The record gives the reactivity of an RNA of 177 nucleotides to 2A3 and DMS.
Conditions: 150 mM KOAc, 10 mM MgCl2 and 150 mM bicine (pH 8.5), 24 C.
DMS adducts were read by reverse transcription with MarathonRT.
For 2A3 the reverse transcriptase was SuperScript II with manganese.

[RMDB]
RNA sequence: GGGAACGACUCGAGUAGAGUCGAAAAGGACGCACAAGGUCCCACAGGUACAAGAAUAGAGACAUCAACUUUGAUCACCCAUUUUCGUCUCUGUACCCUAGUGUCGGAAGUGGGGUUGCACUAGGACACCUGCUACACUGUUCGCAGUGUAGCAGGUAAAAGAAACAACAACAACAAC
Reactivity to 2A3 in 0.01 (KOAc 150mM, MgCl2 10mM, bicine 150mM(pH8.5), 24C), signal-to-noise 2, nucleotides 027 to 126: g030g030a050c070g070c040a110c060a160a060g100g060u050c020c050c000a040c010a000g130g000u060a080c040a110a000g080a120a060u070a070g040a030g030a080c000a070u040c000a050a180c140u090u180u170g040a090u150c010a100c030c020c000a030u130u030u040u130c040g010u010c010u000c010u040g070u160a150c030c000c000u030a030g010u000g050u100c050g090g030a060a040g040u060g020g000g000g070u070u210g000c020a030c070u020a040g010g050a010c040
Reactivity to DMS in 0.01 (KOAc 150mM, MgCl2 10mM, bicine 150mM(pH8.5), 24C), signal-to-noise 2, nucleotides 027 to 126: g020g020a090c120g040c110a110c100a060a110g010g000u000c000c020c020a060c080a110g020g020u000a050c110a120a050g000a090a050u000a000g010a090g000a040c070a070u000c040a080a120c130u010u010u020g000a090u020c190a110c010c000c010a070u010u000u020u000c050g030u000c020u000c030u010g010u000a060c100c020c030u000a020g010u010g000u000c110g000g000a070a040g000u010g000g000g020g030u000u010g040c070a030c030u000a080g000g000a220c160